[RMDB]
RNA sequence: GGGAACGACUCGAGUAGAGUCGAAAAGAUAUGGAUUCCUUCAGGACAUGACCGAUUGCAUCGGAAACGAUGUAGAGGUCAACAGCCUGAGGAAUCCUAAGUCAAAACCACCGGUUCGCCGGUGGAACUGUUAUAUCCACUUCGGUGGAUAUAACAGAAAAGAAACAACAACAACAAC
Reactivity to 2A3 in 0.01 (KOAc 150mM, MgCl2 10mM, bicine 150mM(pH8.5), 24C), signal-to-noise 3, nucleotides 027 to 126: g000a010u050a020u140g000g000a000u000u020c030c000u090u240c030a000g000g020a030c140a300u300g010a020c010c000g130a190u110u300g000c000a010u010c010g030g030a070a040a020c020g010a000u010g000u020a010g000a040g010g000u000c000a010a000c010a000g010c000c010u000g000a000g000g000a000a000u000c000c000u000a040a010g010u000c010a020a010a100a200c000c000a000c000c000g000g070u050u050c300g060c160c000g000g000u000g000g000a000a000
Reactivity to DMS in 0.01 (KOAc 150mM, MgCl2 10mM, bicine 150mM(pH8.5), 24C), signal-to-noise 4, nucleotides 027 to 126: g020a050u000a300u010g000g000a020u000u000c000c000u000u010c000a010g020g010a040c120a280u010g010a000c010c000g010a300u030u000g020c000a000u000c010g010g020a080a090a180c000g000a000u000g020u000a020g020a290g000g000u000c000a030a050c290a220g010c000c000u000g000a030g000g000a000a010u000c000c000u000a010a070g010u010c020a120a080a090a220c010c000a010c000c000g010g010u010u000c300g020c010c000g010g000u000g010g000a040a090